The record gives the reactivity of an RNA of 177 nucleotides to DMS and 2A3. The RNA was probed in 150 mM KOAc, 10 mM MgCl2 and 150 mM bicine (pH 8.5) at 24 C. The data come from the RNA Mapping Database (RMDB), library M2PK50. Reactivities are given for positions 27 through 126. The 2A3 profile rests on 1,403 reads.
RNA sequence: GGGAACGACUCGAGUAGAGUCGAAAAUUCAGAGCCUUCGGGCUCUGAACCGUUUUCCUUGUUCCCAUUAUUGGUAACUCGGUAAUAAAUGGAAAGUUGCCGCAACUUGUUCGUUCGCGAACAAGAAUACUGAUGUUUCUUUCGAGAAACAUCAGUAAAAAGAAACAACAACAACAAC
Reactivity to DMS in 0.01 (KOAc 150mM, MgCl2 10mM, bicine 150mM(pH8.5), 24C), signal-to-noise 2, nucleotides 027 to 126: u000u000c000a010g010a020g000c000c000u000u010c230g020g030g010c000u000c000u010g010a000a000c110c120g020u000u000u000u000c000c040u000u020g010u000u000c000c000c000a130u020u010a100u000u030g030g000u000a010a020c020u000c020g020g010u010a040a140u000a050a130a090u000g000g010a110a110a020g010u000u000g000c000c010g030c300a100a170c000u000u000g000u000u000c000g020u000u020c180g000c030g010a010a010c010a000a000g000a140a140
Reactivity to 2A3 in 0.01 (KOAc 150mM, MgCl2 10mM, bicine 150mM(pH8.5), 24C), signal-to-noise 2, nucleotides 027 to 126: u020u000c000a010g000a010g010c000c000u070u070c280g070g010g020c000u000c010u010g010a010a010c020c030g040u030u010u080u000c000c000u040u110g000u020u020c020c000c030a030u160u220a090u110u140g000g000u000a000a000c020u000c080g100g080u120a110a100u140a170a300a100u140g050g070a210a060a020g010u000u000g000c010c000g000c030a030a090c010u000u020g010u010u010c010g030u000u060c250g010c010g090a000a000c010a000a000g010a010a040